[RMDB]
Background
Conditions: 150 mM KOAc, 10 mM MgCl2 and 150 mM bicine (pH 8.5), 24 C. The record gives the reactivity of an RNA of 207 nucleotides to DMS and 2A3. For 2A3 the reverse transcriptase was SuperScript II with manganese. The 2A3 profile rests on 9,650 reads. It was measured as part of the RMDB library M2RFPK. Reactivities are given for positions 27 through 156.
RNA sequence: GGGAACGACUCGAGUAGAGUCGAAAAGACCGUCUUCUCCCCGACGGUUUCAAUCCAUAGCUUCACGUUGUGUAGCGUAGGUGGAAGGUAUCGUGUGGUGUAUAAACACCACAUAGUCUCUUAGGGGUCAAGCUGAUAAACUUCGGUUUAUCAGCAAGUCAAUCCUAACUUUCGAGUUAGGAUUGACAAAAGAAACAACAACAACAAC
Reactivity to DMS in 0.01 (KOAc 150mM, MgCl2 10mM, bicine 150mM(pH8.5), 24C), signal-to-noise 2, nucleotides 027 to 156: g010a020c000c000g030u000c010u010u010c030u000c000c000c030c070g010a040c000g020g010u020u000u000c050a100a090u000c030c010a140u000a230g040c020u000u000c040a040c030g000u000u000g030u000g030u000a050g000c010g010u000a060g020g010u000g030g010a070a080g030g040u000a050u000c080g060u000g020u000g010g050u000g050u000a160u020a100a110a120c000a000c000c000a010c000a000u000a030g010u000c020u000c020u010u000a060g070g010g000g000u010c030a070a170g020c010u000g000a020u000a000a000a010c000u000u020c300g040g010u000u000u000a000u000c000a010g020c010a010a030
Reactivity to 2A3 in 0.01 (KOAc 150mM, MgCl2 10mM, bicine 150mM(pH8.5), 24C), signal-to-noise 5, nucleotides 027 to 156: g000a000c010c000g010u010c020u210u040c040u100c010c000c000c000g000a000c000g000g000u020u030u050c040a030a030u020c010c000a040u060a080g000c020u050u070c010a040c070g300u300u300g000u100g030u070a010g010c030g070u100a110g070g110u030g000g030a030a040g080g010u090a050u190c050g010u010g000u010g000g020u000g040u030a090u100a270a290a010c000a000c000c000a000c000a000u000a000g000u010c010u000c010u110u230a030g000g010g000g000u050c050a070a030g000c000u000g000a000u000a000a000a000c010u030u060c140g060g000u000u000u000a000u000c000a000g000c000a000a000